[RMDB]
RNA sequence: GGGAACGACUCGAGUAGAGUCGAAAAGAUAUGGAAUUCCCAAGUUCGCAUGUCACAGUCGGAAACGAUCACAGCAUGAACUACGAAUAGGGAAUUCCUAAGUCAAAGUCCCGCUUCGGCGGGACAACCUUACAAAAUCCUUCGGGAUUUUGUAAGGAAAAGAAACAACAACAACAAC
Reactivity to 2A3 in 0.01 (KOAc 150mM, MgCl2 10mM, bicine 150mM(pH8.5), 24C), signal-to-noise 1, nucleotides 027 to 126: g000a010u050a030u190g000g000a020a000u010u030c000c040c000a020a030g110u040u000c000g010c020a040u050g060u140c000a050c060a110g000u000c020g000g060a080a070a090c010g010a020u100c010a020c080a040g010c000a000u030g040a090a030c070u180a030c200g010a000a000u010a020g000g000g000a010a000u000u010c000c000u000a060a000g000u020c040a020a060a120g000u000c060c000c000g010c000u050u050c240g180g020c000g000g020g000a000c010a000a010
Reactivity to DMS in 0.01 (KOAc 150mM, MgCl2 10mM, bicine 150mM(pH8.5), 24C), signal-to-noise 2, nucleotides 027 to 126: g000a020u010a300u000g000g020a070a000u010u000c000c000c000a100a250g010u010u000c000g010c020a020u000g020u000c050a130c290a280g000u000c010g000g020a170a120a130c020g030a010u000c030a090c300a210g000c010a040u000g000a030a010c090u020a300c030g000a010a020u000a110g000g000g030a040a030u000u000c000c000u000a020a040g020u000c020a060a080a130g000u000c000c000c000g020c000u010u000c130g030g070c000g020g000g000a000c000a000a040